RNA sequence: GGGAACGACUCGAGUAGAGUCGAAAAAUAGGCCACAAUGGUAUUAAGCCCGUUGGGUAUGACAUAGUUAUGUGCUAUGGUCUUUACAAGCGGCAUUUCAUUGUAAAACUGGAAGAAACGGUUCAUGUCUACACGAUAUGGCCAGCUGAAGCAGUACGAUGGGUAUUACGUUCGCGUAAUACCCAUCAAAAGAAACAACAACAACAAC
Reactivity to 2A3 in 0.01 (KOAc 150mM, MgCl2 10mM, bicine 150mM(pH8.5), 24C), signal-to-noise 3, nucleotides 027 to 156: a000u150a040g080g000c000c010a010c000a020a010u000g030g010u100a060u080u130a100a040g010c010c010c000g030u000u040g270g010g000u060a030u080g000a000c010a010u020a000g010u150u150a190u300g130u200g030c010u000a010u020g060g190u040c000u030u100u050a030c010a010a010g000c000g000g020c020a000u040u110u060c000a000u030u010g020u030a020a030a060a120c030u040g050g020a070a000g020a070a070a000c050g040g000u250u270c040a000u000g020u000c000u070a140c150a060c220g010a010u010a010u020g010g000c000c010a010g000c020u080g110a070a000g020c070a000g000u060a030c080
Reactivity to DMS in 0.01 (KOAc 150mM, MgCl2 10mM, bicine 150mM(pH8.5), 24C), signal-to-noise 2, nucleotides 027 to 156: a150u000a100g050g000c040c080a090c000a030a060u000g020g010u000a160u000u000a050a110g030c130c020c030g010u010u010g000g090g030u000a040u000g010a020c000a030u020a010g010u010u000a100u020g020u000g010c010u000a010u010g030g020u010c010u000u000u000a020c020a070a080g010c060g020g000c020a210u010u000u000c010a050u020u000g010u000a030a050a060a080c030u020g000g000a150a100g000a110a060a090c080g080g030u000u000c000a050u010g000u010c000u000a170c170a090c250g020a060u000a040u010g030g010c010c000a070g070c050u000g010a070a080g010c030a150g000u000a150c160